An RNA of 177 nucleotides, treated with DMS and 2A3 and read out base by base. For 2A3, 7,791 sequencing reads were counted. Source: RMDB library OK2TRN, as collected in RNAgym.
[RMDB]
RNA sequence: GGGAACGACUCGAGUAGAGUCGAAAACAGCUCACUGAGCAGCUGCGCGCCUACGUGACGCCCGAAGCGCGCCACGUGGCCGUCGAUGACGCGUUCGUGCAGCGAUGCGCGUCUGAGGCUCUGGCUCAGCAUGACUGAAUUUCGAUUCAGUCAUGCUAAAAGAAACAACAACAACAAC
Reactivity to DMS in 0.01 (KOAc 150mM, MgCl2 10mM, bicine 150mM(pH8.5), 24C), signal-to-noise 5, nucleotides 027 to 126: c080a050g000c040u000c120a160c110u000g000a020g010c040a090g010c080u010g000c040g010c220g000c040c000u010a030c020g020u000g010a020c020g000c010c020c220g010a120a130g020c190g000c000g010c000c010a010c000g010u000g010g010c030c010g020u000c070g000a110u000g010a020c000g010c000g010u000u000c010g020u010g000c300a180g000c010g010a030u010g010c000g010c000g000u000c010u000g000a260g000g000c020u000c100u000g020g010c040u000c060
Reactivity to 2A3 in 0.01 (KOAc 150mM, MgCl2 10mM, bicine 150mM(pH8.5), 24C), signal-to-noise 4, nucleotides 027 to 126: c020a020g040c020u050c080a110c080u080g020a000g020c020a000g030c030u050g020c030g000c050g000c020c010u060a020c000g010u000g020a020c010g010c010c040c120g240a150a060g090c120g000c000g000c090c000a000c000g000u010g030g000c020c010g070u060c030g040a050u070g000a010c010g020c010g010u030u000c030g010u190g230c140a130g090c070g010a030u120g010c000g000c000g000u030c010u020g040a020g010g000c010u010c030u050g040g000c020u030c080